[RMDB]
RNA sequence: GGGAACGACUCGAGUAGAGUCGAAAAUAAAGCUAUUGAUCAGAUCCUGAGUGAUGCAAGAGUAUUAGAAUUUAUAAAUGCCAUGGCUAUGAUAGAUCAAGAAAGCAAGUAGUCUAAGUGUCAUUCAGAGCGUAAAUUAGUUCGCUAAUUUACGCUCAAAAGAAACAACAACAACAAC
Reactivity to 2A3 in 0.01 (KOAc 150mM, MgCl2 10mM, bicine 150mM(pH8.5), 24C), signal-to-noise 2, nucleotides 027 to 126: u040a010a040a000g050c030u010a040u060u140g040a070u110c060a060g080a160u050c000c030u000g000a020g000u000g010a000u030g040c030a020a050g090a040g040u050a020u070u060a010g050a060a060u150u240u010a170u110a090a080a010u020g040c020c020a060u090g010g000c000u000a000u020g010a070u050a080g030a010u110c040a030a030g130a100a050a000g050c040a050a030g040u010a000g000u010c000u060a100a030g010u020g030u020c000a010u020u040c000a010
Reactivity to DMS in 0.01 (KOAc 150mM, MgCl2 10mM, bicine 150mM(pH8.5), 24C), signal-to-noise 3, nucleotides 027 to 126: u010a070a100a130g020c030u000a110u010u010g020a040u010c020a160g030a080u010c040c080u010g010a040g020u000g010a050u000g020c020a070a090g010a160g010u010a040u020u020a160g010a120a100u010u010u010a070u000a080a050a090u000g000c010c060a130u000g010g020c000u000a030u020g020a110u000a110g010a070u000c070a040a050g000a110a060a100g020c060a070a080g020u000a040g010u020c030u000a070a060g000u000g010u000c030a060u000u000c090a050